RNA sequence: GGGAACGACUCGAGUAGAGUCGAAAAGAAGGGUGUUGAAUUUUGUCAAAGGCCUUUUCUGCAUCUAUUGAGAUAAUCAUGUGGUUUUUGUCAUUGAUUCUGUUUAUGUGAUGGAUUAUGUUUAUUGAUUUGCAUAUGUUGAACCAGCCUUGCAUCAGUCAUUACUGACGUUCGCGUCAGUAAUGACAAAAGAAACAACAACAACAAC
Reactivity to 2A3 in 0.01 (KOAc 150mM, MgCl2 10mM, bicine 150mM(pH8.5), 24C), signal-to-noise 2, nucleotides 027 to 156: g030a040a000g030g000g030u050g020u040u040g060a120a170u080u090u090u200g060u050c020a000a000a070g000g030c010c000u070u070u140u060c010u060g020c000a060u000c050u160a080u140u140g010a030g020a050u060a100a050u070c030a050u150g020u080g130g070u000u020u030u080u060g020u050c040a020u020u070g060a070u070u050c040u040g110u070u060u080a110u090g050u080g020a080u070g010g020a020u070u010a070u110g110u010u060u070a090u050u100g040a020u040u050u040g010c040a000u110a020u180g100u100u080g000a040a000c030c000a040g000c010c030u040u000g030c010a090u020c040a020

An RNA of 207 nucleotides, treated with 2A3 and read out base by base. The data come from the RNA Mapping Database (RMDB), library OK3TST. Conditions: 150 mM KOAc, 10 mM MgCl2 and 150 mM bicine (pH 8.5), 24 C. 2A3 adducts were read by reverse transcription with SuperScript II with manganese.